The record gives the reactivity of an RNA of 207 nucleotides to 2A3.

[RMDB]
RNA sequence: GGGAACGACUCGAGUAGAGUCGAAAACUAGCUACAUUGUCUCUAUUCCUCUUUUCCGACUGUCAUCCCAAGGCGAGUUGGAUGUUGGACGUGGAGAAUGAAAAUCGGAGUCAAUGAGAAGGCCUGCUUGGGUAAACAGCAUUCCAAGCAUACCAGAGACGAUUAGUCGGUUCGCCGACUAAUCGUCAAAAGAAACAACAACAACAAC
Reactivity to 2A3 in 0.01 (KOAc 150mM, MgCl2 10mM, bicine 150mM(pH8.5), 24C), signal-to-noise 2, nucleotides 027 to 156: c040u050a030g080c020u050a080c040a010u030u000g010u000c000u000c010u090a100u030u030c000c000u000c000u040u040u050u020c020c020g130a040c080u050g000u100c040a130u080c040c000c030a020a020g090g020c110g090a110g100u050u000g020g000a030u030g030u050u130g140g080a150c160g040u050g000g030a030g000a010a040u120g110a010a080a030a090u210c110g020g000a000g000u000c000a020a040u030g000a050g040a150a030g020g000c050c060u020g000c010u000u000g040g010g100u120a070a210a120c110a060g130c000a070u020u060c000c000a000a000g000c010a000u050a030c010c000a020g050a000